Chemical mapping of a 177-nucleotide RNA with 2A3 and DMS.
As a SHAPE reagent, 2A3 marks flexible, mostly unpaired nucleotides at the ribose 2'-OH.
For 2A3 the reverse transcriptase was SuperScript II with manganese.
The data come from the RNA Mapping Database (RMDB), library OK2TRN.
For 2A3, 1,979 sequencing reads were counted.
The DMS profile rests on 3,181 reads.
Conditions: 150 mM KOAc, 10 mM MgCl2 and 150 mM bicine (pH 8.5), 24 C.
RNA sequence: GGGAACGACUCGAGUAGAGUCGAAAAAUGGACAACGGAGCGAUGCAGCUGGCGAACGUGAGGAUCCCCAGGAGGAAUCUCUUGAUGAGGUACACACGAGUGGACAGGGAUGGGACCUACUCGAAGGACGAGUAGAGCAAUUCGUUGCUCUACUCGUAAAAGAAACAACAACAACAAC
Reactivity to 2A3 in 0.01 (KOAc 150mM, MgCl2 10mM, bicine 150mM(pH8.5), 24C), signal-to-noise 2, nucleotides 027 to 126: a010u100g020g030a010c030a090a030c080g050g000a010g060c030g030a010u080g030c020a010g020c020u030g050g020c020g000a090a030c030g090u050g030a070g080g030a140u120c030c030c000c020a000g030g030a070g010g050a260a090u080c020u000c000u070u090g050a110u150g040a140g010g060u100a030c050a000c020a020c080g020a020g050u050g030g030a040c030a050g060g000g020a040u060g010g060g010a010c000c010u000a010c010u000c000g020a050a000g060g000
Reactivity to DMS in 0.01 (KOAc 150mM, MgCl2 10mM, bicine 150mM(pH8.5), 24C), signal-to-noise 3, nucleotides 027 to 126: a120u000g010g010a060c050a080a100c120g020g000a070g000c060g000a070u000g020c050a060g010c040u010g020g030c050g010a050a090c080g020u000g000a080g010g010a120u010c020c010c010c040a040g000g010a030g000g000a080a100u000c010u010c030u010u000g000a090u010g020a090g000g010u000a080c100a110c090a080c090g000a090g020u010g010g000a090c070a060g010g000g010a060u010g000g010g010a040c030c010u000a020c010u000c010g010a070a080g020g020